[RMDB]
Notes:
The data come from the RNA Mapping Database (RMDB), library OK3TST. Chemical mapping of a 207-nucleotide RNA with 2A3 and DMS. The RNA was probed in 150 mM KOAc, 10 mM MgCl2 and 150 mM bicine (pH 8.5) at 24 C. 2A3 adducts were read by reverse transcription with SuperScript II with manganese. Values are in units of 0.01, from 0 to 300, in steps of 10. The 2A3 profile rests on 2,359 reads. Reactivities are given for positions 27 through 156.

RNA sequence: GGGAACGACUCGAGUAGAGUCGAAAAUUCGCGUUUUGUGGUGAAAGAACAGUAUUUGAGCUUGGGAAGGUUUGCAAGUUGUUCCGUCAACUCUCCAUGGACAAGCAGUUGACAAGGUUCUUUGGCCACGAGAAAAACAGGAGGAACCUCGAAGAGAGUUCCAGUUUAUCUUCGGAUAAACUGGAACAAAAGAAACAACAACAACAAC
Reactivity to 2A3 in 0.01 (KOAc 150mM, MgCl2 10mM, bicine 150mM(pH8.5), 24C), signal-to-noise 4, nucleotides 027 to 156: u040u020c020g010c030g060u010u020u040u120g010u020g030g010u060g140a020a010a020g020a010a010c010a030g120u100a130u090u190u180g080a060g000c020u040u040g040g000g050a120a110g090g020u110u160u130g060c060a080a010g000u000u010g050u140u200c070c040g080u130c020a000a010c000u000c000u000c070c050a130u180g090g040a040c000a010a010g030c040a020g070u100u130g030a020c020a060a050g050g000u000u010c000u020u000u020g040g010c000c000a010c010g010a040g030a010a070a010a000a000c020a020g020g020a010g020g030a040a040c010c010u030c050g050a140a040g100a000g000a010
Reactivity to DMS in 0.01 (KOAc 150mM, MgCl2 10mM, bicine 150mM(pH8.5), 24C), signal-to-noise 2, nucleotides 027 to 156: u000u000c010g000c090g020u000u000u000u030g050u000g020g040u000g030a050a060a030g010a040a030c010a170g040u000a070u000u010u010g010a140g040c030u010u020g010g020g000a170a170g030g000u010u000u010g000c040a110a140g040u000u000g010u010u010c070c060g020u000c020a020a070c010u000c000u000c030c020a200u020g030g020a140c030a020a060g000c040a080g000u000u000g010a080c040a080a090g030g010u000u000c010u000u010u010g010g010c000c000a030c020g000a100g000a070a040a040a070a030c050a110g000g000a080g010g010a070a060c060c020u000c030g000a050a100g020a170g010a240